This 177-nucleotide RNA was probed chemically with DMS and 2A3. For DMS the reverse transcriptase was MarathonRT.
RNA sequence: GGGAACGACUCGAGUAGAGUCGAAAACUAGCGAGUGGAUGUUCCGCCUCCCCGGAGUCCCGAGUGAGGCUUAUCCCGGGGAAUCCGGCCAAGUCCCGAAAUGUCUAGUCCCGUGGUCUCACUUCCAGCGUUUAAUAUAGUUCGCUAUAUUAAACGCAAAAGAAACAACAACAACAAC
Reactivity to DMS in 0.01 (KOAc 150mM, MgCl2 10mM, bicine 150mM(pH8.5), 24C), signal-to-noise 3, nucleotides 027 to 126: c010u000a010g010c040g010a150g020u010g030g010a010u010g000u000u000c220c160g000c220c030u000c000c010c010c000g020g000a160g010u010c070c040c020g000a060g010u000g010a040g020g010c060u000u010a030u000c100c020c010g040g000g000g000a040a070u000c190c070g020g010c170c110a090a200g010u000c020c010c010g000a070a120a100u000g010u010c010u000a050g000u000c010c000c020g000u000g020g000u000c010u000c020a040c020u000u010c120c150a190
Reactivity to 2A3 in 0.01 (KOAc 150mM, MgCl2 10mM, bicine 150mM(pH8.5), 24C), signal-to-noise 2, nucleotides 027 to 126: c010u010a010g020c010g050a030g070u240g030g040a030u030g050u160u060c040c030g010c000c010u020c010c000c000c010g060g000a050g060u050c040c050c010g020a050g050u100g010a040g020g000c010u020u080a130u110c000c010c010g010g000g000g040a010a030u090c090c000g000g010c040c040a070a050g020u000c000c020c010g050a120a100a070u200g030u050c000u000a010g030u030c010c000c000g010u040g020g000u000c020u000c060a020c000u050u050c030c030a020
The DMS profile rests on 2,301 reads. For 2A3, 2,584 sequencing reads were counted.